This 177-nucleotide RNA was probed chemically with DMS. It was measured as part of the RMDB library M2PK50. For DMS the reverse transcriptase was MarathonRT.
RNA sequence: GGGAACGACUCGAGUAGAGUCGAAAACUGGAUUCUUUCGAGAAUCCAGCAUGUCUAGUCGCUAGCCAACGAUCAACGCUAGCGACUAGACUUUAUUGAUCGCAUUUGCCUCUUUCGAGAGGCAAAACAUCCGUUCAGCUUUCGAGCUGAACGGAUGAAAAGAAACAACAACAACAAC
Reactivity to DMS in 0.01 (KOAc 150mM, MgCl2 10mM, bicine 150mM(pH8.5), 24C), signal-to-noise 1, nucleotides 027 to 126: c000u020g000g000a000u000u000c000u000u000u000c220g040a010g000a040a000u000c020c000a000g000c130a080u010g040u000c000u000a020g010u000c010g000c010u000a020g010c020c050a110a190c140g020a090u000c230a110a130c260g000c010u010a000g000c000g010a000c000u000a000g000a000c010u010u000u020a050u010u000g000a040u040c050g000c220a160u000u010u000g000c000c000u000c000u000u000u040c170g000a020g000a040g010g020c010a010a010a030a100